This 207-nucleotide RNA was probed chemically with 2A3 and DMS.
RNA sequence: GGGAACGACUCGAGUAGAGUCGAAAAGCGUACUACUAACCUAAAACAAGCUUGGAUUUAUGGAUCUCUAGCGUGUAGGCUCCCAAAUAGGAGCCUAUCGGGUCCAUUGUCAGCUUGGAGUACGGGUUAGUAUCGCAAACAACGAGUUCGCUCGUUGCCAUGCAUGUUGGUUCGCCAACAUGCAUGGAAAAGAAACAACAACAACAAC
Reactivity to 2A3 in 0.01 (KOAc 150mM, MgCl2 10mM, bicine 150mM(pH8.5), 24C), signal-to-noise 6, nucleotides 027 to 156: g000c010g060u130a070c030u000a000c000u000a050a010c000c020u030a020a030a030a050c010a010a000g010c030u180u200g170g000a100u300u300u140a010u060g010g000a010u010c080u010c100u200a070g130c070g120u190g030u060a000g000g000c000u020c000c020c000a100a190a000u300a070g000g000a000g000c010c010u000a010u010c000g000g000g000u000c010c000a000u000u020g010u010c000a010g010c000u000u010g010g000a010g100u020a030c070g000g000g010u000u000a000g000u000a010u110c000g000c000a050a050a040c010a000a000c000g010a000g020u090u030c170g130c120u000c000g000u000u010g030
Reactivity to DMS in 0.01 (KOAc 150mM, MgCl2 10mM, bicine 150mM(pH8.5), 24C), signal-to-noise 1, nucleotides 027 to 156: g020c000g000u000a040c160u000a050c010u010a040a030c000c000u020a060a170a170a290c010a030a020g000c000u000u000g030g000a020u000u000u000a020u000g020g010a020u000c010u000c050u020a150g010c190g030u010g060u000a010g020g000c000u020c000c000c010a080a160a220u000a020g050g010a010g000c000c000u000a000u000c020g000g030g000u000c000c010a010u000u000g010u000c020a080g000c020u010u000g030g030a080g010u010a130c110g020g020g000u000u000a030g010u010a010u010c000g030c020a160a060a120c020a010a050c000g000a130g040u010u000c290g000c130u000c000g000u000u000g000
For 2A3 the reverse transcriptase was SuperScript II with manganese.